Conditions: 150 mM KOAc, 10 mM MgCl2 and 150 mM bicine (pH 8.5), 24 C. The record gives the reactivity of an RNA of 177 nucleotides to DMS and 2A3. Values are in units of 0.01, from 0 to 300, in steps of 10. For 2A3 the reverse transcriptase was SuperScript II with manganese. The data come from the RNA Mapping Database (RMDB), library OK2TRN. DMS (dimethyl sulfate) methylates the pairing face of unpaired adenines and cytosines.

RNA sequence: GGGAACGACUCGAGUAGAGUCGAAAACAUGACCCACGAUGGCUUCAUGCGCGGCAUGCACACCCAUGGCGAGAAUGGCACGAUCAUUGUGCAUGAGGGUCUGCUGCCAAGCCACCCGCUGGCCGCCCGCAGGGCCAAAGUUCGCUUUGGCCCUGCGAAAAGAAACAACAACAACAAC
Reactivity to DMS in 0.01 (KOAc 150mM, MgCl2 10mM, bicine 150mM(pH8.5), 24C), signal-to-noise 3, nucleotides 027 to 126: c140a090u010g010a070c100c000c040a110c160g010a100u010g020g020c030u000u000c060a100u000g010c100g030c120g030g010c010a040u020g000c030a040c060a060c060c010c010a070u010g000g020c030g030a100g000a060a050u000g000g010c030a080c120g010a100u020c120a110u010u010g020u000g000c030a040u000g000a090g010g000g020u000c080u000g010c010u000g010c060c040a040a070g000c020c080a050c030c020c040g000c060u000g010g000c010c050g010c020c050
Reactivity to 2A3 in 0.01 (KOAc 150mM, MgCl2 10mM, bicine 150mM(pH8.5), 24C), signal-to-noise 3, nucleotides 027 to 126: c050a080u130g080a100c000c010c010a010c050g110a110u100g030g030c040u080u070c180a090u110g040c070g000c060g100g000c020a030u120g010c060a000c000a070c000c020c010a080u080g080g020c060g030a060g100a130a080u080g040g020c070a010c240g060a100u100c050a120u110u170g030u070g090c040a060u060g040a230g040g000g000u010c030u020g020c030u010g000c000c000a000a020g000c000c000a020c000c030c000g020c050u030g040g020c030c000g000c020c020